[RMDB]
RNA sequence: GGGAACGACUCGAGUAGAGUCGAAAACGGCAUUUCCCCAGCAUCCAUGACCUACCAGGCUGCGGUGCGGCUCGCCGCACAGGUCAUCCCUCAUCGGGCGCGUCCUGCGUCCUUCCACGCCAACCCAAGACCAUUGCUUCCUUCGGGAAGCAAUGAAGAUCGAUAUGUGGUUCGCCACAUAUCGAUCAAAAGAAACAACAACAACAAC
Reactivity to 2A3 in 0.01 (KOAc 150mM, MgCl2 10mM, bicine 150mM(pH8.5), 24C), signal-to-noise 2, nucleotides 027 to 156: c030g070g000c040a070u050u030u020c020c000c000c000a010g030c010a040u060c050c000a050u060g030a040c000c020u080a160c040c060a040g060g080c080u050g000c070g030g000u030g000c050g040g020c060u100c040g000c020c000g020c000a000c000a000g030g000u000c000a050u050c000c020c000u060c030a130u100c060g000g000g030c010g010c020g070u150c020c110u090g000c000g000u020c000c000u000u040c030c010a060c040g040c020c020a030a060c050c030c010a040a010g070a050c040c000a000u000u000g000c000u020u010c000c000u030u060c060g050g000g010a000a000g000c000a000a000u000g000a000a010
The record gives the reactivity of an RNA of 207 nucleotides to 2A3. Source: RMDB library M2RFPK, as collected in RNAgym.